[RMDB]
RNA sequence: GGGAACGACUCGAGUAGAGUCGAAAAUAGACAAUAUGAAGGAUGGGAAAGCAUGCUUGUUAUCUACGGAGGUCCUCUUCCAUCCGAAACGUACGUGUGGAGCAUGCGAAAGGAUGGUCGCGCCGCACAGUAUCUUGCAUGCGAAAGGAUGGAUCCAAUAAUACGAGGGAUUCGUCCCUCGUAUUAUAAAAGAAACAACAACAACAAC
Reactivity to DMS in 0.01 (KOAc 150mM, MgCl2 10mM, bicine 150mM(pH8.5), 24C), signal-to-noise 4, nucleotides 027 to 156: u010a110g010a130c080a060a140u000a080u010g020a100a140g000g010a070u010g010g000g000a120a120a200g010c020a040u000g020c010u000u010g000u000u000a080u010c050u000a090c060g020g010a140g000g000u000c020c030u000c050u000u000c010c010a040u000c010c010g010a040a070a090c060g040u000a030c060g040u000g020u010g050g000a100g020c000a090u010g000c040g020a070a110a160g000g010a080u000g010g020u000c070g010c050g020c040c020g010c020a020c030a110g030u000a040u000c050u010u010g020c010a040u000g010c030g010a090a060a090g020g000a050u010g000g010a090u000c030c020a090
Reactivity to 2A3 in 0.01 (KOAc 150mM, MgCl2 10mM, bicine 150mM(pH8.5), 24C), signal-to-noise 5, nucleotides 027 to 156: u120a010g060a010c060a050a050u090a070u250g070a100a010g030g020a010u040g020g020g040a100a070a060g020c010a020u040g010c030u080u040g060u150u130a140u120c050u060a050c070g060g010a040g020g070u060c010c020u060c020u050u000c010c000a010u010c010c010g010a020a040a000c050g030u070a000c030g010u020g020u040g040g060a050g050c090a070u120g000c010g000a030a010a020g120g030a040u100g080g000u030c010g000c000g000c020c000g020c010a000c020a060g020u030a050u070c050u050u070g010c010a010u040g000c010g070a050a010a010g030g000a030u090g010g010a020u000c010c010a020